[RMDB]
RNA sequence: GGGAACGACUCGAGUAGAGUCGAAAAAGAGGUACGCUGGGCAUGUGAACCGCAUGUGAUGUAGCUUACUGAAGCGCGCACGGUAAGCGCAGAUAUCACGAUGCGUCCCACAUGCCUGUGCUGAAGCGCGCACGGCAACCGAAAGGUGCGAUUUAAAGCAGUAUGUCCUCUUCGGAGGACAUACUGCAAAAGAAACAACAACAACAAC
Reactivity to 2A3 in 0.01 (KOAc 150mM, MgCl2 10mM, bicine 150mM(pH8.5), 24C), signal-to-noise 2, nucleotides 027 to 156: a000g190a040g040g120u220a020c020g000c010u030g010g000g000c000a000u020g030u010g030a110a150c040c020g030c010a020u030g010u000g000a000u000g020u030a010g000c000u000u000a010c000u000g050a180a110g000c000g000c000g000c000a000c030g010g010u000a000a000g000c000g000c030a010g000a020u010a000u000c000a000c050g040a010u010g010c000g020u040c030c010c000a000c000a010u010g000c030c000u000g000u000g000c010u000g030a080a020g050c020g000c000g010c000a020c020g010g000c000a000a000c000c000g050a050a000a040g000g000u000g000c040g010a070u070u160u260a100a110a000